RNA sequence: GGGAACGACUCGAGUAGAGUCGAAAAUGACCGGCUGGAUCGUCGAGCAGGAGGCGACGCCGCUGUAUCUCAGCGGCCUCCCCGCGGAACGCGAGAACGGGGAGCGACCCGAUCUCUACGGGAUCGCCUUCAGGUGCUCGUUCGCGAGCACCUGAAGAAAAGAAACAACAACAACAAC
Reactivity to DMS in 0.01 (KOAc 150mM, MgCl2 10mM, bicine 150mM(pH8.5), 24C), signal-to-noise 1, nucleotides 027 to 126: u000g010a170c000c040g020g020c170u030g010g020a080u000c050g020u000c050g000a120g020c060a110g010g010a030g010g060c060g000a000c300g020c040c050g040c000u030g020u010a110u010c280u010c030a030g000c040g000g010c020c080u000c010c010c000c050g030c050g010g000a140a130c070g020c140g020a100g020a050a090c010g010g010g010g000a080g010c080g000a020c010c000c010g020a080u010c110u000c090u020a100c000g020g000g000a220u000c000g020c030
The record gives the reactivity of an RNA of 177 nucleotides to DMS. Source: RMDB library OK2TRN, as collected in RNAgym.